An RNA of 177 nucleotides, treated with DMS and 2A3 and read out base by base. For 2A3 the reverse transcriptase was SuperScript II with manganese. For 2A3, 1,638 sequencing reads were counted. DMS adducts were read by reverse transcription with MarathonRT. In probing experiments dimethyl sulfate is read out at A N1 and C N3, which are open when not base-paired. The reactions ran in a buffer of 150 mM KOAc, 10 mM MgCl2 and 150 mM bicine (pH 8.5), at 24 C.
[RMDB]
RNA sequence: GGGAACGACUCGAGUAGAGUCGAAAAGCGAUCCGCUGCCAUGGCUAGUCUAGGGAUCCUAGCGAGUACCUAGGAUACGUACUCCAUGGGAUCCAUGUGCUAGCACGAGUGGAUCUCCAUGGCUAGCGCUGUGCACAGCAUUCGUGCUGUGCACAGCAAAAGAAACAACAACAACAAC
Reactivity to DMS in 0.01 (KOAc 150mM, MgCl2 10mM, bicine 150mM(pH8.5), 24C), signal-to-noise 1, nucleotides 027 to 126: g000c190g000a130u010c070c010g010c000u000g050c020c050a040u020g000g000c030u000a000g020u000c070u000a090g020g000g000a020u000c000c000u000a060g010c230g010a020g000u000a020c020c060u000a120g010g040a140u000a060c300g050u000a010c020u020c010c030a090u000g010g020g010a000u010c000c000a040u000g040u010g020c010u000a020g020c010a090c140g010a030g000u000g000g010a150u000c000u000c000c000a090u000g000g000c030u000a030g010c100
Reactivity to 2A3 in 0.01 (KOAc 150mM, MgCl2 10mM, bicine 150mM(pH8.5), 24C), signal-to-noise 1, nucleotides 027 to 126: g090c060g000a050u030c000c010g000c040u010g060c050c020a100u100g020g030c000u020a000g020u080c020u020a030g080g150g040a010u000c000c010u000a010g050c030g090a010g000u040a000c040c030u100a150g140g160a170u080a240c050g000u000a000c000u010c000c030a160u300g010g000g000a010u000c000c010a000u030g010u010g010c000u000a030g000c050a000c010g000a020g030u140g080g090a040u040c020u020c020c020a070u030g100g020c100u090a020g000c050